[RMDB]
RNA sequence: GGGAACGACUCGAGUAGAGUCGAAAAGUAAUAGAUAGGUGGAUGACGAGAAAGGGUGCGCUGAUAUCCGUUACGAAUGCUAGCAGUAAAUAGAAUAGCGCUCCUAAUACAACUAGCAACAAAAGGAUAAGGUAUCGUGAUGUCAAUCACAUUGCGAGAUUACGUACUGCUUCGGCAGUACGUAAUCAAAAGAAACAACAACAACAAC
Reactivity to DMS in 0.01 (KOAc 150mM, MgCl2 10mM, bicine 150mM(pH8.5), 24C), signal-to-noise 2, nucleotides 027 to 156: g010u000a130a130u020a060g030a030u000a020g030g030u010g020g020a110u000g000a180c020g000a170g040a070a070a120g000g010g020u000g010c070g040c000u020g000a150u000a050u010c010c050g010u000u000a100c120g000a200a240u000g020c010u000a020g010c040a060g000u010a060a090a180u000a040g000a050a180u020a190g010c040g020c060u010c040c010u010a070a160u000a060c090a070a030c050u000a000g030c040a040a180c070a090a030a050a080g000g000a090u000a050a130g000g080u000a140u010c040g010u000g000a030u000g060u000c060a060a130u000c140a020c050a020u010u010g000c010g000a110
Reactivity to 2A3 in 0.01 (KOAc 150mM, MgCl2 10mM, bicine 150mM(pH8.5), 24C), signal-to-noise 4, nucleotides 027 to 156: g020u030a000a100u060a100g120a040u040a040g040g050u020g020g030a050u070g040a030c040g000a020g080a080a070a030g050g000g010u050g000c020g010c030u020g040a020u000a010u120c030c040g010u040u030a030c050g050a130a050u070g030c050u020a020g000c040a010g030u100a000a070a110u120a030g100a050a040u060a030g020c020g000c030u020c000c000u020a070a030u070a030c020a070a030c030u030a000g000c030a010a060c010a040a100a010a020g050g000a030u050a060a040g070g000u060a020u040c020g010u010g020a010u020g030u040c060a030a050u070c000a030c010a040u010u040g000c020g010a040
About this RNA:
The record gives the reactivity of an RNA of 207 nucleotides to DMS and 2A3. The data come from the RNA Mapping Database (RMDB), library OK3TST. DMS adducts were read by reverse transcription with MarathonRT. 2A3 adducts were read by reverse transcription with SuperScript II with manganese. For DMS, 2,315 sequencing reads were counted.